Structure probing data (DMS and 2A3) for a 177-nucleotide construct. Conditions: 150 mM KOAc, 10 mM MgCl2 and 150 mM bicine (pH 8.5), 24 C. For 2A3, 9,998 sequencing reads were counted. Source: RMDB library M2PK90, as collected in RNAgym.

[RMDB]
RNA sequence: GGGAACGACUCGAGUAGAGUCGAAAAUUAAAGAGCGUAGCACACACUCAGACUAAGUCUGACACACACAUACGCUAAUCAUCUCUCUGUGUGUUCGAGAUAUCGAUAAGUGUAUGAGAUGAAAAAAGAGUAUAUAGGGUUUCGACCCUAUAUACUCAAAAGAAACAACAACAACAAC
Reactivity to DMS in 0.01 (KOAc 150mM, MgCl2 10mM, bicine 150mM(pH8.5), 24C), signal-to-noise 5, nucleotides 027 to 126: u000u010a070a090a120g010a150g010c000g000u000a020g010c030a030c010a040c110a090c300u000c010a010g010a020c020u000a110a160g020u000c000u000g000a030c040a010c020a010c010a020c010a060u010a010c010g000c010u000a070a090u000c000a020u000c000u000c020u000c070u000g030u000g010u000g000u000u000c010g010a030g010a160u010a070u000c020g010a030u000a040a110g020u000g000u000a050u000g000a010g000a020u000g010a000a070a090a080a070a080
Reactivity to 2A3 in 0.01 (KOAc 150mM, MgCl2 10mM, bicine 150mM(pH8.5), 24C), signal-to-noise 5, nucleotides 027 to 126: u180u110a120a090a030g160a030g010c010g010u020a000g020c020a000c000a000c000a010c030u020c000a000g010a020c040u200a280a060g030u000c010u010g010a000c000a000c000a000c000a000c000a030u010a010c010g000c050u060a090a080u010c000a010u010c000u000c000u000c040u010g010u000g000u000g010u030u010c010g020a010g050a150u160a090u210c010g010a020u010a140a040g010u000g010u030a030u060g010a000g000a010u020g000a110a000a000a000a010a010
Values are in units of 0.01, from 0 to 300, in steps of 10. As a SHAPE reagent, 2A3 marks flexible, mostly unpaired nucleotides at the ribose 2'-OH.